[RMDB]
RNA sequence: GGGAACGACUCGAGUAGAGUCGAAAAUCAUGCUAUCACGUGGUAACUGGGUCUAGAUCAGUUACCUGUGAGCGAAAGUUCACAUUGUGUCAAUGAUCUAGACGUUGACGUAAACGUGAUAGCAUGCCUACACGUAUCUAUUCGUAGAUACGUGUAGAAAAGAAACAACAACAACAAC
Reactivity to 2A3 in 0.01 (KOAc 150mM, MgCl2 10mM, bicine 150mM(pH8.5), 24C), signal-to-noise 9, nucleotides 027 to 126: u120c000a000u000g000c000u000a000u000c000a000c000g010u010g020g050u080a070a030c010u030g040g000g080u020c030u040a020g010a080u020c000a030g050u030u020a000c000c000u000g000u000g000a000g000c000g040a100a020a000g000u010u000c000a000c020a030u060u180g040u040g010u100c040a010a050u020g010a050u010c020u050a010g030a070c050g210u030u040g050a050c050g040u090a010a020a000c000g000u000g000a000u000a000g000c000a000u000g000c010
Reactivity to DMS in 0.01 (KOAc 150mM, MgCl2 10mM, bicine 150mM(pH8.5), 24C), signal-to-noise 9, nucleotides 027 to 126: u020c010a010u000g000c000u000a000u000c000a010c000g020u000g000g000u000a100a050c020u000g010g010g010u000c060u000a040g000a030u000c000a030g010u000u000a010c000c040u000g000u000g000a000g010c000g000a120a100a150g010u000u000c000a010c000a030u000u010g010u010g010u000c120a050a050u000g010a050u000c050u000a030g000a040c010g010u000u000g000a080c110g010u000a080a120a000c000g010u000g000a010u000a000g010c000a000u000g000c300